This 207-nucleotide RNA was probed chemically with DMS and 2A3. For DMS the reverse transcriptase was MarathonRT. Source: RMDB library OK3TST, as collected in RNAgym.
RNA sequence: GGGAACGACUCGAGUAGAGUCGAAAAAUUCAAUUACUACGCCGUUAAUACCAUCGAUGUCUCCGACAUCGUCGUGACGACCAGCACCAUACGCACGUUCUGCACAUGGGUAACCCAUCUGACGUAACCAUUUAACUACGUCGCGUUCAUACUGCGACCUACGUACUUUAUUCGUAAAGUACGUAGGAAAAGAAACAACAACAACAAC
Reactivity to DMS in 0.01 (KOAc 150mM, MgCl2 10mM, bicine 150mM(pH8.5), 24C), signal-to-noise 4, nucleotides 027 to 156: a090u010u020c060a080a120u010u000a100c020u000a060c040g030c010c010g020u010u000a060a120u010a140c020c010a110u010c030g010a030u000g030u000c010u000c180c070g030a070c030a030u010c010g030u000c090g010u000g010a060c010g010a060c010c040a080g000c030a060c040c010a070u000a050c030g000c000a080c040g020u000u000c040u010g000c050a060c070a060u000g020g000g000u010a040a110c030c010c020a090u000c060u020g030a020c040g000u000a050a130c090c100a190u010u010u010a110a130c080u000a030c030g010u000c020g030c060g010u000u010c060a120u000a110c060u000g040c030g000a220
Reactivity to 2A3 in 0.01 (KOAc 150mM, MgCl2 10mM, bicine 150mM(pH8.5), 24C), signal-to-noise 6, nucleotides 027 to 156: a000u180u130c050a020a060u140u050a080c070u030a020c040g020c040c010g050u060u090a090a030u080a200c050c020a060u070c020g020a010u020g010u000c040u040c300c150g010a010c010a040u020c020g010u030c070g040u050g060a030c040g030a050c040c020a030g030c040a030c020c030a050u050a130c050g010c020a020c040g040u100u050c040u050g010c040a040c010a110u070g000g000g060u080a080a090c010c000c010a040u040c080u120g020a020c020g040u020a030a060c030c030a110u100u140u120a090a060c060u070a020c030g020u010c030g000c010g010u050u050c040a070u080a140c010u090g030c010g040a040